[RMDB]
The record gives the reactivity of an RNA of 177 nucleotides to DMS and 2A3.
It was measured as part of the RMDB library OK2TRN.
The RNA was probed in 150 mM KOAc, 10 mM MgCl2 and 150 mM bicine (pH 8.5) at 24 C.
For 2A3, 3,890 sequencing reads were counted.
RNA sequence: GGGAACGACUCGAGUAGAGUCGAAAAUCAAGCAUGGGCGGCAUGGGCGGGGGAAAUCGGGCGCGCAGUGGGCAUGGGAAGCACCGCACCGACUUCGCGAGCAACAGGGGUUUAUCCGCACGCGAUCGCUUAGAAUUUAUUUCGAUAAAUUCUAAGCAAAAGAAACAACAACAACAAC
Reactivity to DMS in 0.01 (KOAc 150mM, MgCl2 10mM, bicine 150mM(pH8.5), 24C), signal-to-noise 3, nucleotides 027 to 126: u020c090a110a130g010c120a150u020g000g010g000c140g020g020c140a060u000g000g000g000c110g000g010g030g020g010a010a020a060u000c090g000g000g010c050g000c100g020c110a090g000u000g010g000g000c090a090u000g000g000g000a120a080g010c090a100c060c040g000c060a090c030c030g000a040c140u000u000c030g010c030g020a070g000c060a080a090c140a120g020g010g010g000u010u010u010a080u020c080c070g020c060a070c030g020c040g020a020u000c200
Reactivity to 2A3 in 0.01 (KOAc 150mM, MgCl2 10mM, bicine 150mM(pH8.5), 24C), signal-to-noise 3, nucleotides 027 to 126: u090c020a040a040g070c030a120u120g040g030g070c120g010g040c060a070u040g020g010g010c170g020g000g000g000g000a020a060a020u090c030g000g020g020c040g000c020g000c060a020g030u120g020g050g000c060a070u060g020g020g010a030a010g040c030a020c060c030g000c030a040c010c000g020a030c030u050u030c030g010c010g030a010g000c010a020a120c030a100g040g030g020g040u020u090u070a090u040c040c020g030c020a010c000g030c010g030a040u140c100